Description: Conditions: 150 mM KOAc, 10 mM MgCl2 and 150 mM bicine (pH 8.5), 24 C. The record gives the reactivity of an RNA of 177 nucleotides to 2A3. For 2A3 the reverse transcriptase was SuperScript II with manganese. It was measured as part of the RMDB library OK1LIB.
[RMDB]
RNA sequence: GGGAACGACUCGAGUAGAGUCGAAAACGACUGCUAAUCUACUUAAUAAUCGAUGCAGUCUUGAUUAUUUGUUAUAAUAUGCAAUUAGACUAAUCGAUAUUGUCAUAAAUGUCAAACAACAGUUAAACGAUGAGGUCGGAUUCGUCCGACCUCAUCGAAAAGAAACAACAACAACAAC
Reactivity to 2A3 in 0.01 (KOAc 150mM, MgCl2 10mM, bicine 150mM(pH8.5), 24C), signal-to-noise 1, nucleotides 027 to 126: c000g000a000c000u000g000c000u200a230a000u050c090u040a020c000u170u190a040a300u230a060a170u170c180g030a000u080g010c150a050g000u000c020u000u000g000a000u000u300a010u070u010u000g010u020u000a080u000a140a000u000a000u110g250c100a090a170u080u000a110g030a150c210u300a000a030u020c000g000a000u000a060u010u000g000u000c080a000u000a000a000a010u000g000u000c000a000a000a000c000a010a010c000a140g080u170u160a000a000a000